[RMDB]
RNA sequence: GGGAACGACUCGAGUAGAGUCGAAAAAGACUCCUCUACGGAGGAGUCACGGGGCGUUUCUUUGACUGGUGUGAUUAUGUUUAUCAGUCAUUGAAGUGCUCUGAUAGCAGCCGCUACGGCGGCUGCAGCUCUAAUGGCGAUUCGUCGCCAUUAGAGCAAAAGAAACAACAACAACAAC
Reactivity to 2A3 in 0.01 (KOAc 150mM, MgCl2 10mM, bicine 150mM(pH8.5), 24C), signal-to-noise 2, nucleotides 027 to 126: a000g010a010c010u010c020c000u000c010u020a050c290g110g010a000g030g000a000g000u000c000a000c010g010g010g000g000c020g010u000u000u000c000u000u000u000g000a000c000u000g020g020u050g060u020g150a210u170u280a160u300g190u070u060u020a010u040c000a000g010u000c000a000u010u000g000a000a000g030u020g010c000u020c000u010g020a010u120a030g000c000a000g020c000c000g000c030u030a090c300g070g000c000g000g000c000u000g000c000a000
The data come from the RNA Mapping Database (RMDB), library RFM100. Chemical mapping of a 177-nucleotide RNA with 2A3. The 2A3 profile rests on 1,526 reads. For 2A3 the reverse transcriptase was SuperScript II with manganese. The reactions ran in a buffer of 150 mM KOAc, 10 mM MgCl2 and 150 mM bicine (pH 8.5), at 24 C.